[RMDB]
RNA sequence: GGGAACGACUCGAGUAGAGUCGAAAAGCAAAUAUUGUCUUAAUUACUUAGGCUAAAAGAAACAAGUAUUAAAGCGGGACAAGGCAUCGACAUUUGAUACAAAUAUUGAUCAAUGGAUGUCUUAUUUAAACCUCAUCCGGCUUCGGCCGGAUGAGAACGCUUAGCAUACGUUCGCGUAUGCUAAGCGAAAAGAAACAACAACAACAAC
Reactivity to 2A3 in 0.01 (KOAc 150mM, MgCl2 10mM, bicine 150mM(pH8.5), 24C), signal-to-noise 1, nucleotides 027 to 156: g050c000a010a060a040u170a130u200u080g020u000c040u040u300a130a140u180u010a120c070u070u050a130g050g000c010u120a130a020a190a050g050a010a110a020c000a030a040g040u060a020u050u110a150a070a000g050c080g120g000g000a040c030a040a020g000g000c000a000u000c050g120a060c020a020u120u060u260g000a000u080a080c010a070a180a060u140a080u220u250g010a000u000c010a000a000u000g000g000a000u000g010u010c000u000u000a000u000u060u070a060a040a030c000c000u000c000a020u040c000c000g000g000c010u010u090c180g240g000c000c000g000g000a000u000g000a000g000a000a000